RNA sequence: GGGAACGACUCGAGUAGAGUCGAAAAUCCAUGUGGUAUCCCUAUGAAUUUGCAACACCCUCGCAGCAUUCAUAGAACCUCUUCUACACGUCGACAAGAAGCAAUUCUUGUAUUUAUGCCAGCCCUUCCGUCGCGUAAAAUUCGUUUUACGCGACGGAAAAGAAACAACAACAACAAC
Reactivity to 2A3 in 0.01 (KOAc 150mM, MgCl2 10mM, bicine 150mM(pH8.5), 24C), signal-to-noise 2, nucleotides 027 to 126: u030c010c000a060u120g040u100g050g000u060a080u060c010c010c010u000a020u050g070a110a020u070u060u170g000c020a040a010c000a220c110c040c050u090c080g010c000a010g000c010a040u000u030c000a010u040a010g060a020a050c000c000u030c000u090u050c020u080a010c020a030c090g090u070c040g050a020c030a020a020g000a010a010g000c030a060a090u070u000c000u010u020g050u000a060u020u130u040a070u080g040c010c000a020g000c000c010c000u010u000